Structure probing data (DMS and 2A3) for a 170-nucleotide construct. The data come from the RNA Mapping Database (RMDB), library 15KLIB. For 2A3 the reverse transcriptase was SuperScript II with manganese. The 2A3 profile rests on 20,043 reads. The reactions ran in a buffer of 150 mM KOAc, 10 mM MgCl2 and 150 mM bicine (pH 8.5), at 24 C.

RNA sequence: GGGAACGACUCGAGUAGAGUCGAAAAGUCCCGAGAUGGCCGCGUCCGAGGUUCCCAUUCAAAGGGGAGAGGGGGGGACUUGGAGCACAGGGGUCCAGUUCAGUCCGUGGGAUUACCCCGGAUCUCCGAAGCCCUAGCUUCGGCUAGGGCAAAAGAAACAACAACAACAAC
Reactivity to DMS in 0.01 (KOAc 150mM, MgCl2 10mM, bicine 150mM(pH8.5), 24C), signal-to-noise 6, nucleotides 027 to 129: g050u010c030c000c020g000a090g030a020u000g000g040c000c070g030c160g000u020c030c020g000a060g000g000u020u040c040c010c020a160u050u050c120a070a070a140g030g050g040g000a110g000a100g000g000g000g000g000g000g000a040c070u010u000g030g030a040g030c240a090c130a120g000g000g000g000u040c080c060a080g000u000u000c110a120g030u030c050c000g010u000g000g000g010a230u020u040a110c020c010c000c030g030g000a060u030c000u020c010c030g010a110a160
Reactivity to 2A3 in 0.01 (KOAc 150mM, MgCl2 10mM, bicine 150mM(pH8.5), 24C), signal-to-noise 8, nucleotides 027 to 129: g040u020c000c000c010g020a030g010a060u110g010g020c020c030g030c070g040u020c010c000g000a010g000g020u020u030c000c010c010a050u110u130c110a080a080a030g020g000g020g020a090g040a080g030g020g000g000g000g000g010a000c000u030u070g030g010a040g030c090a030c050a130g000g000g000g020u020c040c030a020g030u100u100c010a010g020u000c010c030g040u180g020g020g030a190u090u270a260c020c010c000c010g010g020a020u010c030u000c010c010g010a050a010